[RMDB]
RNA sequence: GGGAACGACUCGAGUAGAGUCGAAAACUCAACAUUGACAACUGCUGUAAUGUAACAUCCGGUUGGAAUGUAUUUGGCACACUUCACCAACUGCGUGUGGCCACACUGUCGAAUACACGCAUUAAUGGCGUCUCGAAACCUUCGGGUUUCGAGACGCAAAAGAAACAACAACAACAAC
Reactivity to 2A3 in 0.01 (KOAc 150mM, MgCl2 10mM, bicine 150mM(pH8.5), 24C), signal-to-noise 2, nucleotides 027 to 126: c000u000c000a000a010c080a070u060u060g110a070c010a030a000c000u060g110c060u050g000u300a220a160u010g090u300a250a000c000a020u130c110c000g060g000u010u010g020g040a090a070u010g000u060a130u030u110u000g090g000c040a000c000a040c180u040u040c020a000c140c020a040a040c090u060g040c000g000u050g020u090g070g000c000c000a160c000a000c040u160g040u140c010g100a010a050u200a010c000a000c050g030c080a000u110u140a150a010u160g080

Source information: The record gives the reactivity of an RNA of 177 nucleotides to 2A3. Conditions: 150 mM KOAc, 10 mM MgCl2 and 150 mM bicine (pH 8.5), 24 C. For 2A3, 409 sequencing reads were counted. Reactivities are given for positions 27 through 126.